Record summary:
Structure probing data (2A3) for a 207-nucleotide construct. Reactivities are given for positions 27 through 156. 2A3 adducts were read by reverse transcription with SuperScript II with manganese. The RNA was probed in 150 mM KOAc, 10 mM MgCl2 and 150 mM bicine (pH 8.5) at 24 C.

RNA sequence: GGGAACGACUCGAGUAGAGUCGAAAACAGGUAAGUACGCAAUUCUCUAAGCGAUGAGAAGCGUGUGGAAAAUUAGGGAAGGGCUACGGCUAUAAUCCUAAGAAAGCUUAUCUACAAGCGGAGGUAUAAAAGCUCGCAGCGUUCGCGCUGCGAGCAACUUACACAACUACUUCGGUAGUUGUGUAAGAAAAGAAACAACAACAACAAC
Reactivity to 2A3 in 0.01 (KOAc 150mM, MgCl2 10mM, bicine 150mM(pH8.5), 24C), signal-to-noise 1, nucleotides 027 to 156: c040a020g060g000u030a030a040g030u050a020c010g010c090a120a130u020u000c020u010c040u120a160a070g080c100g130a070u100g050a020g030a020a030g280c020g000u060g010u120g050g070a020a030a060a130u170u060a050g050g020g000a060a070g060g010g000c000u050a040c110g000g000c000u000a010u040a170a070u020c000c000u010a000a000g020a040a030a000g000c000u010u040a020u030c010u070a070c020a100a050g060c040g030g120a050g000g090u110a080u020a190a150a030a020g080c050u000c000g080c000a000g020c000g050u070u090c110g000c020g000c110u060g000c030g010a000g000c020a000a000